[RMDB]
RNA sequence: GGGAACGACUCGAGUAGAGUCGAAAACGGCAACGGCUAACGGUGAGUACCCUCACCCUCUGGCCUACCUUAAGAACGGGAUAGUUCUUCAGGCUGUUUGCGGGUUCCGUUAGGUGGCGCUGUAGAGCUUAACACAAUGUUUCGACAUUGUGUUAAGAAAAGAAACAACAACAACAAC
Reactivity to 2A3 in 0.01 (KOAc 150mM, MgCl2 10mM, bicine 150mM(pH8.5), 24C), signal-to-noise 9, nucleotides 027 to 126: c020g040g020c040a030a000c020g040g020c000u020a080a010c030g020g000u100g080a060g080u190a140c070c050c000u030c010a020c000c020c000u030c040u050g040g010c000c000u020a010c000c000u020u040a010a000g010a010a000c020g070g040g190a140u180a140g020u010u000c000u010u010c010a020g000g010c020u040g040u120u080u060g040c040g020g010g000u080u050c010c010g000u040u030a090g060g300u030g010g000c030g010c040u030g050u090a030g020a010g090
Reactivity to DMS in 0.01 (KOAc 150mM, MgCl2 10mM, bicine 150mM(pH8.5), 24C), signal-to-noise 9, nucleotides 027 to 126: c020g010g010c060a060a160c150g000g000c000u010a010a100c240g000g000u010g000a060g020u030a170c210c170c010u010c020a040c020c010c010u000c030u000g000g000c030c030u010a070c090c040u000u020a020a020g000a020a010c020g010g020g030a130u030a110g000u000u000c000u000u000c130a040g000g000c090u000g010u000u010u010g020c130g000g000g000u000u000c010c010g000u000u000a040g010g010u000g010g010c170g000c020u000g010u010a070g000a120g000